Chemical mapping of a 177-nucleotide RNA with DMS and 2A3. The 2A3 profile rests on 5,698 reads. Source: RMDB library 15KREP, as collected in RNAgym. 2A3 adducts were read by reverse transcription with SuperScript II with manganese.
RNA sequence: GGGAACGACUCGAGUAGAGUCGAAAAUAUGGGAACUGCUGGGUUCCUCGGAUGUCGAUCCCCUCUCCCGUUCGGGAAAAGGGGGACUCCGGAACUCCCUGCAGGUUGGGCACGAAGCCCCCACCGGCUUAUGAUAGAUGUUCGCAUCUAUCAUAAGAAAAGAAACAACAACAACAAC
Reactivity to DMS in 0.01 (KOAc 150mM, MgCl2 10mM, bicine 150mM(pH8.5), 24C), signal-to-noise 5, nucleotides 027 to 126: u020a090u020g010g000g000a080a090c030u000g010c020u000g000g010g010u000u000c070c040u010c050g010g010a010u010g020u000c010g000a140u020c010c000c000c010u000c220u000c000c000c000g010u000u010c240g010g000g000a010a020a060a040g010g020g010g010g000a000c010u000c000c010g000g000a050a060c100u010c010c070c050u000g020c020a020g010g000u000u000g010g010g030c040a110c170g000a160a220g000c030c010c010c030c030a080c040c040g000g000
Reactivity to 2A3 in 0.01 (KOAc 150mM, MgCl2 10mM, bicine 150mM(pH8.5), 24C), signal-to-noise 3, nucleotides 027 to 126: u180a050u040g000g010g020a050a060c010u030g000c010u050g010g030g000u020u010c000c020u000c010g020g000a070u190g030u050c040g080a250u190c010c000c000c000u000c010u000c010c010c020g110u260u220c100g020g000g000a040a030a030a010g010g000g000g010g000a000c000u000c000c000g000g010a000a000c030u060c020c000c010u010g000c000a000g030g020u060u060g020g000g000c040a010c150g180a120a030g020c000c000c000c000c010a030c010c010g080g000